[RMDB]
RNA sequence: GGGAACGACUCGAGUAGAGUCGAAAAGCAUUCCACUUCGGUGGAAUGCAAAUGCCGGCAGCAAGAAAAGUGCUUCAAAGAGUGGGAGCACUGCCGAAGAAAAAAGUUCCAUGUUCGCAUGGAACAACAUCACUCAUCUCUUCGGAGAUGAGUGAUGAAAAGAAACAACAACAACAAC
Reactivity to DMS in 0.01 (KOAc 150mM, MgCl2 10mM, bicine 150mM(pH8.5), 24C), signal-to-noise 1, nucleotides 027 to 126: g000c000a000u000u010c000c000a030c010u000u010c200g040g040u000g000g010a010a020u010g030c030a000a040a040u000g020c050c040g000g000c000a150g000c120a040a020g030a100a090a190a070g020u000g000c000u000u030c020a100a140a220g010a090g040u000g010g020g000a020g010c000a020c000u000g010c000c020g020a110a170g000a000a030a100a090a070a090g000u000u010c000c000a000u000g000u010u000c150g020c000a020u020g000g000a000a020c030a070a100
Reactivity to 2A3 in 0.01 (KOAc 150mM, MgCl2 10mM, bicine 150mM(pH8.5), 24C), signal-to-noise 2, nucleotides 027 to 126: g000c010a000u000u000c000c010a020c010u030u050c130g100g000u000g010g000a000a010u010g000c000a000a000a020u120g060c010c000g020g010c010a020g020c030a120a110g030a170a260a030a000g000u010g000c000u000u020c030a170a190a090g210a070g100u200g030g000g020a000g010c000a000c010u010g000c010c000g040a100a140g100a050a070a010a010a000a020g000u000u000c000c000a010u000g030u010u090c280g000c060a020u010g010g000a000a000c000a000a010
Chemical mapping of a 177-nucleotide RNA with DMS and 2A3. High 2A3 reactivity points to a flexible backbone, as in loops and unpaired stretches. The RNA was probed in 150 mM KOAc, 10 mM MgCl2 and 150 mM bicine (pH 8.5) at 24 C. Source: RMDB library M2PK50, as collected in RNAgym. The DMS profile rests on 781 reads.